Chemical mapping of a 177-nucleotide RNA with 2A3 and DMS. The reactions ran in a buffer of 150 mM KOAc, 10 mM MgCl2 and 150 mM bicine (pH 8.5), at 24 C. Values cover nucleotides 27 to 126. High DMS reactivity at an A or C suggests that its Watson-Crick edge is free. For 2A3, 5,048 sequencing reads were counted.
RNA sequence: GGGAACGACUCGAGUAGAGUCGAAAACUGGGCUACUUCACAAAUCAAGCAAUCUAUGGCGGCGCUCCAAGCCCAGCGUGACAUAAAUCGUGCAGAACGCGAGCGUCUCCAGUCUCGUGGAAACACACUAAUAAUUUACUUUCGAGUAAAUUAUUAGAAAAGAAACAACAACAACAAC
Reactivity to 2A3 in 0.01 (KOAc 150mM, MgCl2 10mM, bicine 150mM(pH8.5), 24C), signal-to-noise 4, nucleotides 027 to 126: c010u010g000g010g000c010u090a060c020u180u140c090a050c050a150a150a160u170c070a150a000g110c020a080a140u070c060u230a190u080g010g010c010g010g000c020g000c000u000c010c010a060a020g000c000c000c020a000g000c020g060u060g020a020c010a030u210a090a180a070u120c040g000u040g010c040a040g040a180a020c080g080c110g030a000g000c000g030u000c010u010c010c000a020g030u020c040u050c100g040u030g020g010a040a060a010c020a000c010a010
Reactivity to DMS in 0.01 (KOAc 150mM, MgCl2 10mM, bicine 150mM(pH8.5), 24C), signal-to-noise 4, nucleotides 027 to 126: c030u000g000g010g040c020u000a120c130u000u000c100a080c090a100a100a090u020c160a060a110g020c090a060a060u000c160u010a070u010g010g020c070g000g020c010g020c020u000c010c050a080a100g020c010c010c020a070g010c030g020u000g000a120c080a060u000a050a090a110u020c050g020u000g020c080a100g010a140a100c110g000c110g000a020g010c030g010u000c020u000c000c000a070g010u000c080u000c080g030u010g000g010a080a080a130c040a020c050a300